Chemical mapping of a 177-nucleotide RNA with 2A3 and DMS.
The data come from the RNA Mapping Database (RMDB), library TTRDEL.
For 2A3 the reverse transcriptase was SuperScript II with manganese.
Conditions: 150 mM KOAc, 10 mM MgCl2 and 150 mM bicine (pH 8.5), 24 C.
Reactivities are rounded to 0.1 and cut off at 0 and 3.
The 2A3 profile rests on 2,322 reads.
For DMS, 2,682 sequencing reads were counted.
RNA sequence: GGGAACGACUCGAGUAGAGUCGAAAAGAUAUGGACUUUGACAUGAGCGGCCUCGGAAACGAGGCUGCUCAACAGCAAAGGUCCUAAGUCAAAUCAAGAAGUAGUUCUUCGGAACUACUUCUUGAAACGCUGAAUAUACGUUCGCGUAUAUUCAGCGAAAAGAAACAACAACAACAAC
Reactivity to 2A3 in 0.01 (KOAc 150mM, MgCl2 10mM, bicine 150mM(pH8.5), 24C), signal-to-noise 1, nucleotides 027 to 126: g000a000u070a030u150g010g000a010c080u030u020u000g070a110c030a070u060g000a010g040c020g000g000c000c000u030c000g020g000a110a030a000c000g020a000g050g000c010u000g000c000u020c020a000a000c030a030g020c000a000a010a020g190g120u020c010c000u010a140a010g050u030c080a050a000a260u020c010a000a010g000a000a010g010u010a000g000u020u010c030u070u100c300g010g000a000a000c000u010a000c010u000u000c000u000u000g000a000a010a000
Reactivity to DMS in 0.01 (KOAc 150mM, MgCl2 10mM, bicine 150mM(pH8.5), 24C), signal-to-noise 3, nucleotides 027 to 126: g000a030u000a300u010g000g010a090c000u000u000u000g000a070c090a190u000g000a010g020c000g010g010c000c000u010c000g000g010a100a080a110c000g020a010g000g010c000u000g010c000u000c000a010a030c210a210g010c030a030a020a020g000g000u010c010c000u010a060a140g010u030c020a090a090a160u010c010a000a000g000a020a010g000u000a010g000u000u010c000u000u010c200g030g000a000a000c000u000a000c000u000u000c000u000u000g000a000a070a150